[RMDB]
RNA sequence: GGGAACGACUCGAGUAGAGUCGAAAACUCAAUAUGAUGAAGCCGUUACUCGUGUAAAUGAAGCUGGCUUGGCGCAUCGAAUUGAUGUGCAACUUAAAGACUACCGUUUGCUCGAAGGCAAGUUCGAGUCCGUGGGAUGAUUCGUCAUCCCACGGACAAAAGAAACAACAACAACAAC
Reactivity to DMS in 0.01 (KOAc 150mM, MgCl2 10mM, bicine 150mM(pH8.5), 24C), signal-to-noise 1, nucleotides 027 to 126: c020u010c000a120a230u040a060u020g020a140u000g010a090a160g000c010c030g000u020u000a050c130u020c040g050u010g000u010a030a020a050u020g000a080a060g020c230u020g020g030c090u000u000g020g000c000g000c010a010u000c030g020a110a150u000u020g010a040u000g030u000g050c000a030a080c150u000u010a100a020a050g030a060c010u000a020c040c060g020u000u000u000g000c000u000c070g010a050a070g060g010c050a050a160g020u000u000c050g010a180
Reactivity to 2A3 in 0.01 (KOAc 150mM, MgCl2 10mM, bicine 150mM(pH8.5), 24C), signal-to-noise 2, nucleotides 027 to 126: c010u040c000a010a030u300a240u300g070a040u060g070a050a000g000c000c020g040u150u120a160c030u030c010g010u030g000u040a020a060a050u100g060a120a030g070c110u030g000g020c000u040u020g080g000c010g000c000a000u000c040g160a300a300u160u240g000a000u000g000u000g000c030a050a000c010u080u230a110a050a000g030a050c020u050a040c010c060g000u010u020u020g010c010u020c020g010a040a020g010g000c000a050a070g080u000u030c020g070a030